The record gives the reactivity of an RNA of 207 nucleotides to DMS and 2A3.
The data come from the RNA Mapping Database (RMDB), library OK3TST.
DMS adducts were read by reverse transcription with MarathonRT.
The RNA was probed in 150 mM KOAc, 10 mM MgCl2 and 150 mM bicine (pH 8.5) at 24 C.
[RMDB]
RNA sequence: GGGAACGACUCGAGUAGAGUCGAAAACAUGGUAUGGCCUCGCAUCCGGCCUACCAACAGAAUCAACAACUUUGGAUGCGGUGGGCGAGAGCCCUAAGAAGGAGUCUCCUCGCCUGGGGAGCUCCGUAUGACUUAAUGUAUUACCAGGCGGAUACAAGGCUACUAAAUGAUUCGUCAUUUAGUAGCCAAAAGAAACAACAACAACAAC
Reactivity to DMS in 0.01 (KOAc 150mM, MgCl2 10mM, bicine 150mM(pH8.5), 24C), signal-to-noise 1, nucleotides 027 to 156: c050a190u000g010g000u010a030u060g070g020c020c000u000c020g050c000a020u000c060c020g030g000c030c020u010a030c000c000a040a300c110a150g030a140a110u000c060a120a120c130a040a130c230u020u020u040g060g010a060u000g050c030g060g040u000g000g000g000c000g050a300g000a220g020c000c000c030u000a010a110g000a120a160g020g030a030g020u000c020u000c000c020u020c010g020c020c000u000g020g020g020g010a070g020c000u000c000c000g010u020a020u010g050a060c140u010u000a160a170u030g000u020a040u000u010a030c040c020a090g020g060c020g000g000a110u000a040c030a070a240
Reactivity to 2A3 in 0.01 (KOAc 150mM, MgCl2 10mM, bicine 150mM(pH8.5), 24C), signal-to-noise 3, nucleotides 027 to 156: c030a060u040g000g000u060a070u270g000g000c000c040u060c020g000c000a000u000c000c000g000g000c000c000u020a000c000c000a000a020c050a050g090a050a080u210c040a040a100c030a030a080c090u160u180u140g000g000a020u010g000c010g000g030u040g000g010g000c010g010a050g000a030g100c000c000c000u010a020a030g030a040a040g000g000a000g030u030c010u000c040c000u010c010g000c010c000u000g000g000g010g000a000g000c000u000c000c000g000u030a070u050g070a020c000u050u110a130a030u260g120u240a140u110u140a070c000c000a000g000g010c120g000g020a060u120a090c070a060a040